RNA sequence: GGGAACGACUCGAGUAGAGUCGAAAAAAGCGAGAGCACCGUCGAAUUCGACGACAAUCUCAUCUUCUUCUUUUCUGGCACUUGAAGUUGUGCGCUAGUUUAAGGAGUUGGCGCUCCACCUGCAGUAUAGGAUCACGUAAUUCGUUACGUGAUCCUAAAAAGAAACAACAACAACAAC
Reactivity to DMS in 0.01 (KOAc 150mM, MgCl2 10mM, bicine 150mM(pH8.5), 24C), signal-to-noise 3, nucleotides 027 to 126: a120a030g010c200g000a080g000a030g010c290a220c130c040g020u010c030g000a300a280u000u000c000g000a020c000g010a040c090a070a180u010c020u010c010a070u000c030u000u000c000u000u000c010u000u000u000u000c020u000g010g000c030a070c030u010u020g020a070a060g010u020u000g030u010g010c030g030c030u010a030g000u020u020u000a060a050g030g000a040g000u000u000g010g010c080g020c000u000c040c020a090c030c070u000g020c090a090g000u000a150
Reactivity to 2A3 in 0.01 (KOAc 150mM, MgCl2 10mM, bicine 150mM(pH8.5), 24C), signal-to-noise 1, nucleotides 027 to 126: a000a000g030c020g020a070g000a000g020c050a020c090c000g010u000c000g060a210a300u300u250c040g020a020c010g010a030c030a030a100u030c030u000c010a090u010c010u000u000c000u000u030c000u020u030u020u000c020u000g010g000c030a020c040u060u070g130a230a190g180u270u100g000u020g070c020g000c060u020a020g050u160u010u010a020a020g050g010a020g000u000u040g030g020c020g020c000u040c020c020a040c010c000u070g020c080a020g010u040a050